RNA sequence: GGGAACGACUCGAGUAGAGUCGAAAAUCAUGGUGGUUCGCCACCAUGAACUGUCUAGUCGCUAGAAAACGAUCAAAACUAGCGACUAGACUUACGAUCGAACUGGGGGACAGUUCGCUGUCCCCAACAUGUCGAUAAGAUUCGUCUUAUCGACAUGAAAAGAAACAACAACAACAAC
Reactivity to 2A3 in 0.01 (KOAc 150mM, MgCl2 10mM, bicine 150mM(pH8.5), 24C), signal-to-noise 5, nucleotides 027 to 126: u030c000a000u000g000g000u010g010g060u030u050c190g050c050c000a000c000c000a000u000g000a000a010c010u000g010u000c000u000a000g000u010c000g000c000u000a010g060a090a160a030a030c150g130a200u200c110a020a060a020a160c000u010a000g010c000g000a000c000u000a000g000a000c010u000u000a010c010g040a050u080c030g070a140a070c160u210g120g000g000g000g000a000c000a000g010u050u010c110g010c010u010g000u000c000c000c000c000a000a000
Reactivity to DMS in 0.01 (KOAc 150mM, MgCl2 10mM, bicine 150mM(pH8.5), 24C), signal-to-noise 7, nucleotides 027 to 126: u000c000a010u000g000g020u000g000g010u010u010c230g020c010c000a020c010c000a000u000g000a010a160c120u010g020u000c000u000a010g010u000c000g010c000u000a000g000a070a050a120a140c180g010a110u000c180a090a100a110a130c010u000a010g000c000g010a010c000u000a000g000a000c000u000u010a030c300g000a090u010c100g010a090a100c230u000g010g010g000g010g000a030c000a020g010u000u010c170g020c020u000g010u000c010c000c000c010a020a040
About this RNA:
The record gives the reactivity of an RNA of 177 nucleotides to 2A3 and DMS. For DMS the reverse transcriptase was MarathonRT. The RNA was probed in 150 mM KOAc, 10 mM MgCl2 and 150 mM bicine (pH 8.5) at 24 C. It was measured as part of the RMDB library M2PK50. Values cover nucleotides 27 to 126.